Source: RMDB library 15KLIB, as collected in RNAgym. An RNA of 170 nucleotides, treated with 2A3 and DMS and read out base by base. The RNA was probed in 150 mM KOAc, 10 mM MgCl2 and 150 mM bicine (pH 8.5) at 24 C. High DMS reactivity at an A or C suggests that its Watson-Crick edge is free. DMS adducts were read by reverse transcription with MarathonRT.

[RMDB]
RNA sequence: GGGAACGACUCGAGUAGAGUCGAAAAGUUCGGUGAACCCUCCCGGGUGUUUCCUCUUCCUAGGUCCGGAGUCGACCUCCAUCUGAUCCGUCCUGGCUCUCUUCGCCGGGGGAGCUCCCUCCCCAUCAACGCUGUUAGUUCGCUAACAGCAAAAGAAACAACAACAACAAC
Reactivity to 2A3 in 0.01 (KOAc 150mM, MgCl2 10mM, bicine 150mM(pH8.5), 24C), signal-to-noise 9, nucleotides 027 to 129: g030u060u060c050g020g050u110g070a080a070c000c000c000u040c010c020c000g030g000g010u090g030u020u060u030c000c010u030c020u050u030c010c020u030a040g030g010u030c050c050g030g020a030g040u050c020g040a090c010c010u010c010c010a110u060c050u090g050a070u030c010c010g060u030c030c030u020g010g000c000u020c000u010c020u150u120c040g030c030c020g000g010g000g010g000a010g010c020u070c010c000c000u010c000c000c000c000a060u120c030a020a050c080
Reactivity to DMS in 0.01 (KOAc 150mM, MgCl2 10mM, bicine 150mM(pH8.5), 24C), signal-to-noise 9, nucleotides 027 to 129: g020u020u050c050g000g020u030g020a080a070c030c020c040u040c020c020c040g020g010g000u040g020u020u010u010c020c000u020c040u020u020c000c000u040a100g020g030u030c060c050g010g020a070g030u000c060g030a100c020c010u020c010c010a050u030c090u030g020a100u010c030c040g010u040c010c010u030g010g010c040u020c060u000c030u060u010c070g030c000c010g000g000g010g000g010a030g000c020u020c010c000c000u000c000c000c000c020a110u060c080a050a120c180